An RNA of 177 nucleotides, treated with DMS and 2A3 and read out base by base. For DMS, 3,323 sequencing reads were counted. It was measured as part of the RMDB library M2PK90. 2A3 adducts were read by reverse transcription with SuperScript II with manganese. DMS adducts were read by reverse transcription with MarathonRT.
[RMDB]
RNA sequence: GGGAACGACUCGAGUAGAGUCGAAAAGUAAAGCGCGAGGGCUGGUGAGGAUUUGGAGGCGUGAGAGAGAUUGUAGGGAUCCUGCCUCCUCCCUGUCCGCGCGGCGCCUCCUAGCCGAUAUAAAAAAACUCAACUAUUUGUUCGCAAAUAGUUGAGUAAAAGAAACAACAACAACAAC
Reactivity to DMS in 0.01 (KOAc 150mM, MgCl2 10mM, bicine 150mM(pH8.5), 24C), signal-to-noise 3, nucleotides 027 to 126: g000u000a070a140a140g010c020g000c070g020a050g010g010g010c040u000g010g000u000g010a050g000g010a170u010u020u000g020g020a020g000g020c070g010u000g010a120g000a110g000a150g000a060u000u010g010u010a180g010g010g000a060u000c010c010u000g000c010c010u010c010c010u000c030c010c030u000g000u000c020c000g000c030g030c030g000g000c080g000c040c030u000c010c020u000a130g020c060c050g000a070u010a080u030a010a000a090a040a070a090
Reactivity to 2A3 in 0.01 (KOAc 150mM, MgCl2 10mM, bicine 150mM(pH8.5), 24C), signal-to-noise 3, nucleotides 027 to 126: g050u080a060a080a080g030c040g000c040g040a140g050g040g000c030u050g010g090u180g050a060g040g050a070u200u120u300g090g010a000g020g020c030g040u190g010a130g000a000g000a010g010a070u030u100g080u140a140g020g150g000a010u000c000c010u010g020c010c000u000c010c000u010c010c000c000u010g030u000c010c000g000c010g010c010g000g010c010g030c010c000u030c000c000u000a040g030c000c020g060a030u050a020u190a240a100a000a010a000a010